[RMDB]
RNA sequence: GGGAACGACUCGAGUAGAGUCGAAAACAUUCAUCAGGUCGUGCAGAAGUUCGUGCUGCAACUUGAAGCCCAGCUUGCCGAACGCGGCGUGACCUUUGAACUGACCGAUGCGGCCAUCGCAUGGCUAGUAUAUUACUCAGUUCGCUGAGUAAUAUACAAAAGAAACAACAACAACAAC
Reactivity to DMS in 0.01 (KOAc 150mM, MgCl2 10mM, bicine 150mM(pH8.5), 24C), signal-to-noise 9, nucleotides 027 to 126: c140a160u000u000c020a030u000c150a040g020g010u000c020g020u000g010c050a080g010a090a180g020u000u000c020g020u010g020c010u000g010c040a070a070c130u010u010g000a090a110g010c060c080c090a110g000c050u000u000g020c060c020g010a040a040c070g000c100g000g020c000g020u000g000a020c020c000u000u000u000g010a040a060c170u010g010a180c020c010g000a070u000g010c140g000g000c030c030a030u010c180g000c040a300u000g000g010c030u000a110
Reactivity to 2A3 in 0.01 (KOAc 150mM, MgCl2 10mM, bicine 150mM(pH8.5), 24C), signal-to-noise 9, nucleotides 027 to 126: c010a040u060u070c010a030u020c040a040g000g010u010c010g020u020g010c020a010g030a260a030g060u030u030c020g070u120g030c020u020g000c020a060a060c060u090u180g150a100a040g020c020c030c020a020g010c040u080u160g040c020c010g020a040a020c040g010c030g060g000c000g010u010g000a010c000c000u000u000u020g010a020a010c030u030g060a050c010c010g030a030u090g050c080g020g010c040c030a090u110c060g020c120a040u020g010g000c000u010a050
The record gives the reactivity of an RNA of 177 nucleotides to DMS and 2A3. 2A3 adducts were read by reverse transcription with SuperScript II with manganese. For 2A3, 56,573 sequencing reads were counted. For DMS the reverse transcriptase was MarathonRT. The data come from the RNA Mapping Database (RMDB), library OK2TST. Conditions: 150 mM KOAc, 10 mM MgCl2 and 150 mM bicine (pH 8.5), 24 C.